[RMDB]
RNA sequence: GGGAACGACUCGAGUAGAGUCGAAAAAUACGCCCUUCGGGGCGUAUGUAUCUCCUAAGUCCUAUAAUCGGACGUGAGAGACCAACAGCGUUCGGAAACGAACGACAUGGUCUCUCUCCGGUAGGAUAUGGAUUAACCCGCCAGUUCGCUGGCGGAAUUUAAGGCGGUAAUUCGUUACCGCCUUAAAAAAAGAAACAACAACAACAAC
Reactivity to 2A3 in 0.01 (KOAc 150mM, MgCl2 10mM, bicine 150mM(pH8.5), 24C), signal-to-noise 1, nucleotides 027 to 156: a000u000a000c000g010c000c000c010u000u110c250g000g000g000g000c000g000u000a000u030g000u000a080u010c050u010c000c000u040a100a020g040u000c010c000u070a060u150a300a300u160c010g020g010a040c080g060u190g000a000g000a000g000a000c000c000a050a140c070a140g070c000g010u010u000c010g040g040a010a090a080c020g000a000a020c010g090a060c000a020u080g000g000u000c000u000c000u000c000u010c010c000g000g020u030a010g000g000a040u030a110u170g030g010a010u030u250a070a060c000c000c020g060c010c010a010g010u070u170c170g080c290u060g000g000c000g010g000a010a020
Reactivity to DMS in 0.01 (KOAc 150mM, MgCl2 10mM, bicine 150mM(pH8.5), 24C), signal-to-noise 1, nucleotides 027 to 156: a020u000a000c010g020c010c000c000u030u000c300g130g040g050g080c010g090u000a000u050g010u040a120u000c050u010c010c020u010a070a240g060u000c000c000u000a080u000a230a050u000c020g000g010a130c220g000u020g010a060g010a020g010a040c010c010a030a110c070a120g030c040g000u000u010c000g000g000a170a100a250c000g000a000a000c000g010a030c080a300u000g020g000u000c010u000c000u000c000u000c000c000g020g010u000a030g010g000a030u000a230u000g000g000a120u000u020a100a100c070c000c000g000c020c000a120g000u000u000c270g060c030u010g000g040c000g050g000a010a020

Source: RMDB library RNAMAK, as collected in RNAgym. Structure probing data (2A3 and DMS) for a 207-nucleotide construct. The RNA was probed in 150 mM KOAc, 10 mM MgCl2 and 150 mM bicine (pH 8.5) at 24 C. 2A3 adducts were read by reverse transcription with SuperScript II with manganese. The DMS profile rests on 2,348 reads.